[RMDB]
RNA sequence: GGGAACGACUCGAGUAGAGUCGAAAAGUAUAUGGUCAACACAGGCCAUUACAGCUGCCAAUAGUGAUUCAGGCGAGCUGACAAAAGCAUUUACCAAUACUUCAUGGCAGGGUGCUGCAGGGACCGGAACUACCAUUAAUAAUGGAAUUGAAGUAGAGUUAACCUCUUACUUCGGUAAGAGGUUAACAAAAGAAACAACAACAACAAC
Reactivity to DMS in 0.01 (KOAc 150mM, MgCl2 10mM, bicine 150mM(pH8.5), 24C), signal-to-noise 2, nucleotides 027 to 156: g050u000a080u000a080u000g000g060u010c020a090a140c130a170c190a180g010g030c010c000a030u020u000a110c000a080g000c030u000g000c040c030a110a130u000a100g060u000g010a080u010u020c070a150g030g080c010g030a080g000c010u000g040a180c080a050a080a140a090g000c000a060u010u000u000a100c050c020a050a060u000a030c020u000u000c070a100u000g010g000c000a060g010g010g010u000g000c030u000g020c030a090g010g010g000a150c030c030g000g000a050a070c050u000a160c000c000a030u000u000a040a080u010a100a090u000g000g000a120a100u020u010g010a050a070g000u000a090g000a220
Reactivity to 2A3 in 0.01 (KOAc 150mM, MgCl2 10mM, bicine 150mM(pH8.5), 24C), signal-to-noise 4, nucleotides 027 to 156: g040u020a090u000a000u180g020g020u000c020a040a130c040a080c040a190g010g000c010c010a010u020u040a030c000a000g000c000u020g020c010c000a090a110u120a100g140u110g120a150u140u130c090a030g010g030c030g110a050g000c000u030g040a070c050a020a090a010a000g040c010a020u050u080u210a060c000c030a020a000u050a110c030u040u040c010a040u060g040g000c030a020g020g000g050u030g030c010u020g000c040a050g020g030g020a030c030c000g020g020a060a010c010u050a070c020c000a010u040u080a090a120u160a130a010u050g030g020a020a100u070u070g000a090a040g050u060a070g010a000
An RNA of 207 nucleotides, treated with DMS and 2A3 and read out base by base. Source: RMDB library OK3TST, as collected in RNAgym.